[RMDB]
Conditions: 150 mM KOAc, 10 mM MgCl2 and 150 mM bicine (pH 8.5), 24 C.
Chemical mapping of a 177-nucleotide RNA with DMS and 2A3.
DMS adducts were read by reverse transcription with MarathonRT.

RNA sequence: GGGAACGACUCGAGUAGAGUCGAAAAGUUCACCGUUGUCAACUAUUGUGUGCGACGAAAAGUUCGCACGAAGAUAAAACCACGUGGGCUCUCGGAGCAAGUACAUGACAUGGUGGCGCAGUACAGAAAUGGGUUUUAAUUUCGAUUAAAACCCAUUAAAAGAAACAACAACAACAAC
Reactivity to DMS in 0.01 (KOAc 150mM, MgCl2 10mM, bicine 150mM(pH8.5), 24C), signal-to-noise 8, nucleotides 027 to 126: g010u000u000c010a030c020c030g020u010u000g010u000c030a080a130c190u000a080u010u000g010u010g020u000g010c000g010a110c010g000a060a080a110a170g010u000u000c010g020c010a010c010g000a070a120g000a090u000a050a070a130a180c090c080a070c090g010u010g010g010g000c020u000c070u010c060g000g000a120g000c030a030a060g000u000a050c080a140u000g000a030c030a060u010g010g010u000g000g000c040g000c130a090g010u000a070c150a110g000a060
Reactivity to 2A3 in 0.01 (KOAc 150mM, MgCl2 10mM, bicine 150mM(pH8.5), 24C), signal-to-noise 3, nucleotides 027 to 126: g020u140u100c010a010c020c030g040u060u100g000u020c010a040a020c080u080a120u300u090g070u030g010u000g090c010g020a010c010g040a100a100a000a080g040u100u060c040g010c000a000c000g010a030a010g010a020u110a060a110a020a040c040c040a090c130g030u090g000g100g000c020u000c010u040c060g070g000a030g000c020a050a010g050u030a030c060a130u070g020a000c010a010u030g000g000u010g020g030c010g000c030a040g060u120a110c020a040g070a050